[RMDB]
RNA sequence: GGGAACGACUCGAGUAGAGUCGAAAAAGGAACGCUUCUCCCUUCCUAUACAGAGUCUGGGAAAGAGUGGCCAAGGUUGCUGUACCUGUUUUUCAACCAACAGCUCAUCCUUGCCAAGGCCAAUGGGGCUGGUGUGAGUAUUCGUACUCACACCAGCAAAAGAAACAACAACAACAAC
Reactivity to DMS in 0.01 (KOAc 150mM, MgCl2 10mM, bicine 150mM(pH8.5), 24C), signal-to-noise 2, nucleotides 027 to 126: a080g000g000a130a050c110g010c040u010u010c090u000c040c030c010u000u000c010c000u010a120u010a160c170a150g010a060g010u000c030u000g000g000g010a060a050a040g000a060g000u000g010g000c060c020a030a150g000g010u000u000g010c080u000g000u000a140c160c070u000g000u000u000u000u000u000c140a110a130c120c130a030a030c150a030g030c020u000c090a070u000c040c040u010u000g000c030c010a060a180g020g000c050c010a040a060u000g010g000g000